[RMDB]
Chemical mapping of a 207-nucleotide RNA with DMS and 2A3. 2A3 adducts were read by reverse transcription with SuperScript II with manganese. DMS adducts were read by reverse transcription with MarathonRT. As a SHAPE reagent, 2A3 marks flexible, mostly unpaired nucleotides at the ribose 2'-OH. The reactions ran in a buffer of 150 mM KOAc, 10 mM MgCl2 and 150 mM bicine (pH 8.5), at 24 C. It was measured as part of the RMDB library M2RFPK.
RNA sequence: GGGAACGACUCGAGUAGAGUCGAAAAGUAUUAUUUGCUAAAGAGCAACUUUAGGUUGCUGAAAAUGAUUUACGGGUAGUGGAAUAGGUUAACCGUAAGACCUUUGGUUGAAAAACUAUGAAAUUAAAAAACCGUAAUACGUUCGCGUAUUACGGAACGAAAAGAUGAUCUUCGGAUCAUCUUUUCGAAAAGAAACAACAACAACAAC
Reactivity to DMS in 0.01 (KOAc 150mM, MgCl2 10mM, bicine 150mM(pH8.5), 24C), signal-to-noise 1, nucleotides 027 to 156: g030u010a060u010u000a080u000u010u000g000c000u010a130a110a130g000a170g000c040a000a030c010u000u000u000a150g050g000u000u000g000c000u000g000a060a020a100a080u000g000a080u000u010u010a030c040g000g000g050u000a030g050u030g010g010a110a230u010a110g020g000u000u000a030a100c020c030g020u000a050a060g010a060c040c010u000u000u000g000g010u000u040g000a010a060a130a050a110c100u010a120u020g000a190a060a150u020u060a010a080a100a060a070a100c000c000g000u000a000a020u000a000c000g070u000u000c300g050c020g020u000a030u000u000a010c000g030g000a000a060
Reactivity to 2A3 in 0.01 (KOAc 150mM, MgCl2 10mM, bicine 150mM(pH8.5), 24C), signal-to-noise 2, nucleotides 027 to 156: g010u010a070u300u040a140u050u140u090g000c000u040a070a040a080g100a010g000c000a000a000c000u100u130u190a090g110g000u000u020g000c000u010g070a100a110a000a020u180g040a060u000u030u040a010c020g020g050g110u110a120g050u030g110g080a120a100u070a090g060g020u050u070a070a030c030c020g000u010a000a070g020a040c000c000u070u040u060g040g000u040u060g020a130a100a030a030a030c050u060a130u130g130a070a130a160u160u160a130a160a020a020a060a000c000c000g000u000a000a000u000a000c000g000u010u040c300g000c000g080u010a010u000u000a000c000g000g000a010a000